RNA sequence: GGGAACGACUCGAGUAGAGUCGAAAAGAUAUGGACUCAGACAUGUCGUCACAGUCGGAAACGACUGAAGUCGACAACAGCUGACAUGUCCUAAGUCAAAAGUCUCAAGAGUUCGCUCUUGAGACAAGCAAUUUGUAUAGUUCGCUAUACAAAUUGCAAAAGAAACAACAACAACAAC
Reactivity to 2A3 in 0.01 (KOAc 150mM, MgCl2 10mM, bicine 150mM(pH8.5), 24C), signal-to-noise 5, nucleotides 027 to 126: g030a000u100a040u150g020g000a000c010u000c030a000g030a130c100a250u100g020u010c010g000u010c010a010c010a050g010u010c010g010g000a060a070a030c010g000a000c000u000g040a120a050g070u030c010g010a010c020a090a030c040a050g050c000u020g020a050c090a210u190g000u000c000c000u040a110a030g010u020c010a010a030a070a180g010u000c000u000c000a010a000g010a000g040u090u180c290g070c120u010c000u000u010g020a000g000a000c000a000a000
Reactivity to DMS in 0.01 (KOAc 150mM, MgCl2 10mM, bicine 150mM(pH8.5), 24C), signal-to-noise 5, nucleotides 027 to 126: g010a070u010a300u000g010g010a020c020u000c030a040g000a070c110a160u000g000u000c010g020u020c010a250c000a010g000u000c000g010g000a080a090a170c010g010a020c000u000g000a040a080g010u000c020g020a040c020a040a060c210a130g020c030u000g000a060c300a050u010g010u000c010c010u010a040a130g010u010c050a060a080a130a100g000u000c000u000c000a000a000g000a020g020u000u010c240g010c000u000c000u000u000g000a020g000a000c000a010a050
Conditions: 150 mM KOAc, 10 mM MgCl2 and 150 mM bicine (pH 8.5), 24 C. Chemical mapping of a 177-nucleotide RNA with 2A3 and DMS. 2A3 adducts were read by reverse transcription with SuperScript II with manganese. For DMS the reverse transcriptase was MarathonRT. It was measured as part of the RMDB library TTRDEL. Reactivities are given for positions 27 through 126.